[RMDB]
RNA sequence: GGGAACGACUCGAGUAGAGUCGAAAAGAUAUGGACUCGUUGCUUUUGACGAGCGAUGGAUCGGAAACGAUCCUAAGCUCGAUAAGCACCGAGUCCUAAGUCAAAUCCAGCGGUUCGCCGCUGGAAACAGAAACAGUAGCUUCGGCUACUGUUUCUGAAAAGAAACAACAACAACAAC
Reactivity to 2A3 in 0.01 (KOAc 150mM, MgCl2 10mM, bicine 150mM(pH8.5), 24C), signal-to-noise 1, nucleotides 027 to 126: g030a030u040a030u120g010g000a000c000u000c010g020u000u010g000c000u130u120u180u300g300a200c040g020a000g020c000g000a030u130g000g000a000u000c010g000g040a000a020a020c000g010a010u000c010c000u000a040a000g000c010u000c000g040a010u000a040a000g010c000a010c020c010g000a000g000u020c000c000u000a000a010g000u000c010a000a000a110u030c000c000a000g000c000g010g050u050u100c270g020c130c020g000c000u030g000g000a000a030a000
Reactivity to DMS in 0.01 (KOAc 150mM, MgCl2 10mM, bicine 150mM(pH8.5), 24C), signal-to-noise 2, nucleotides 027 to 126: g000a030u000a250u000g000g000a010c000u000c000g000u000u000g010c000u030u010u000u000g010a100c120g010a000g030c000g000a260u030g020g000a000u020c000g010g030a090a080a190c000g010a000u000c010c000u000a060a300g030c000u020c010g020a070u000a010a000g010c010a020c080c000g000a010g010u000c000c000u000a000a080g000u010c000a090a080a140u000c000c000a010g020c000g020g000u000u000c150g050c020c000g010c000u020g000g000a010a010a130
This 177-nucleotide RNA was probed chemically with 2A3 and DMS. Reactivities are given for positions 27 through 126. For DMS, 1,198 sequencing reads were counted. For 2A3, 2,245 sequencing reads were counted.